[RMDB]
RNA sequence: GGGAACGACUCGAGUAGAGUCGAAAAGUCAUUUCGCCGCGAUGUUAUGGACGGCGAUCGCCAUCUGGAUCGAGCCGUUGCGCAGCACCUUUGACUAUGGGCAGAUCAACGUGCUGCUGAUGCUGGCAGGCCACAGUGAGUUCGCUCACUGUGGCCUAAAAGAAACAACAACAACAAC
Reactivity to DMS in 0.01 (KOAc 150mM, MgCl2 10mM, bicine 150mM(pH8.5), 24C), signal-to-noise 1, nucleotides 027 to 126: g000u050c130a110u000u000u010c080g050c000c030g040c030g070a140u000g030u050u020a080u020g020g000a080c010g000g000c000g040a030u000c110g020c010c030a130u010c130u010g000g010a060u000c000g010a030g000c000c000g020u000u000g000c170g000c010a000g020c010a030c030c090u000u000u000g030a010c070u000a080u010g010g000g060c070a060g010a100u000c010a000a060c300g000u000g000c000u000g000c000u000g000a050u000g010c030u030g050g040c130
Reactivity to 2A3 in 0.01 (KOAc 150mM, MgCl2 10mM, bicine 150mM(pH8.5), 24C), signal-to-noise 1, nucleotides 027 to 126: g050u020c060a150u030u000u010c000g000c010c000g010c040g030a050u130g140u300u250a060u210g030g020a000c010g020g010c020g000a030u050c040g000c020c020a200u050c020u030g090g030a180u090c000g030a010g010c010c020g070u090u010g010c040g000c000a020g000c020a140c030c050u050u020u120g020a020c010u050a120u180g070g070g070c090a000g030a100u030c000a000a010c020g060u120g000c000u000g000c070u050g020a040u100g090c080u030g030g000c000